[RMDB]
RNA sequence: GGGAACGACUCGAGUAGAGUCGAAAAGAUAUGGAUCCACGGAGCCUUGGAUUUAUAGCUAAGUCGGAAACGAUAUGCUAUUGUCAGGCUCAGUGGAUCCUAAGUCAAAGCUGCGUUCGCGCAGCAACAACGCAGAGUACUUCGGUACUCUGCGUUGAAAAGAAACAACAACAACAAC
Reactivity to 2A3 in 0.01 (KOAc 150mM, MgCl2 10mM, bicine 150mM(pH8.5), 24C), signal-to-noise 2, nucleotides 027 to 126: g010a020u040a020u200g000g000a000u000c000c000a020c000g030g000a020g000c050c000u190u290g120g020a080u270u300u120a030u020a000g010c010u050a150a150g060u010c010g000g050a150a050a070c020g020a020u010a000u150g000c010u000a000u010u030g000u000c000a000g000g000c000u000c000a000g020u000g000g000a000u010c000c010u010a000a020g000u000c060a030a050a140g000c010u020g000c000g030u040u140c300g000c030g000c160a000g090c000a000a000
Reactivity to DMS in 0.01 (KOAc 150mM, MgCl2 10mM, bicine 150mM(pH8.5), 24C), signal-to-noise 1, nucleotides 027 to 126: g010a030u000a300u020g000g020a000u000c000c000a000c000g010g010a020g000c000c000u000u020g090g000a000u010u000u000a000u010a020g010c000u010a040a250g000u000c010g020g010a210a110a170c010g010a020u010a300u000g000c010u000a010u000u000g010u000c030a020g000g020c020u020c020a020g000u000g000g000a020u010c010c000u020a030a070g020u000c000a070a100a050g000c000u000g000c000g000u000u010c210g050c010g010c000a000g030c000a090a060